[RMDB]
RNA sequence: GGGAACGACUCGAGUAGAGUCGAAAAGAUAUGGAAAUGUCGUAUGCCUCUUUGAUCUCGGAAACGAGGGAGAGGGUACGAGCAUUUCCUAAGUCAAAAGAUCCUACGCCUUCGGGCGUAGGAUCAAGAAAUCGUAAUAGUUCGCUAUUACGAUUUCAAAAGAAACAACAACAACAAC
Reactivity to DMS in 0.01 (KOAc 150mM, MgCl2 10mM, bicine 150mM(pH8.5), 24C), signal-to-noise 4, nucleotides 027 to 126: g010a030u010a300u010g000g000a000a000a000u000g010u000c010g010u000a000u000g010c010c000u000c000u000u000u020g010a050u010c000u000c000g010g000a150a110a250c000g010a010g010g010g000a010g010a020g010g000g000u010a000c000g010a080g010c000a000u000u000u000c000c000u000a020a080g000u000c030a100a080a130a120g000a010u000c000c000u000a010c000g000c000c010u010u010c210g030g000g030c000g010u000a000g010g000a010u000c000a020a060
Reactivity to 2A3 in 0.01 (KOAc 150mM, MgCl2 10mM, bicine 150mM(pH8.5), 24C), signal-to-noise 5, nucleotides 027 to 126: g010a010u080a030u140g000g000a000a000a000u010g020u030c010g000u010a010u120g300c010c010u070c020u220u250u080g110a120u050c000u000c010g000g070a110a100a090c010g010a010g000g010g000a010g000a000g000g020g010u010a010c000g010a030g030c010a000u000u000u000c000c000u000a090a020g040u000c040a030a020a050a190g000a010u000c010c010u000a000c010g000c010c010u100u180c300g090g000g000c030g000u000a000g020g010a000u010c000a000a000
Chemical mapping of a 177-nucleotide RNA with DMS and 2A3. The 2A3 profile rests on 11,751 reads. In probing experiments dimethyl sulfate is read out at A N1 and C N3, which are open when not base-paired. For DMS the reverse transcriptase was MarathonRT. The RNA was probed in 150 mM KOAc, 10 mM MgCl2 and 150 mM bicine (pH 8.5) at 24 C.